[RMDB]
RNA sequence: GGGAACGACUCGAGUAGAGUCGAAAAUUUAACGUUGUUUUAUUGGCGCAAAGGUUUACGGAUAAACAACUAAUAAUUAAACCUUUUGUGUGCGAAACGUGGUUGUUUAACGUACUCUUUAAUCGCUUUGGGGAUGUGUCCUUCGGGACACAUCCAACUGAUUUUAUUCCUUCGGGAAUAAAAUCAGAAAAGAAACAACAACAACAAC
Reactivity to 2A3 in 0.01 (KOAc 150mM, MgCl2 10mM, bicine 150mM(pH8.5), 24C), signal-to-noise 1, nucleotides 027 to 156: u090u100u040a040a000c020g000u000u010g030u000u000u030u060a090u120u120g030g030c040g040c070a090a050a030g020g010u030u020u020a000c030g000g030a140u020a050a010a000c010a010a010c010u040a020a120u080a050a020u100u120a140a000a030c010c000u070u140u150u210g200u110g020u040g080c110g040a120a040a020c050g010u010g020g000u010u010g000u000u000u020a040a030c000g020u000a000c000u000c000u000u020u070a180a260u110c020g000c020u050u030u110g060g090g000g000a010u000g000u010g000u000c000c010u000u010c180g010g000g010a000c010a000c010a000u000c010c000a010a010
Conditions: 150 mM KOAc, 10 mM MgCl2 and 150 mM bicine (pH 8.5), 24 C. Structure probing data (2A3) for a 207-nucleotide construct. Values cover nucleotides 27 to 156.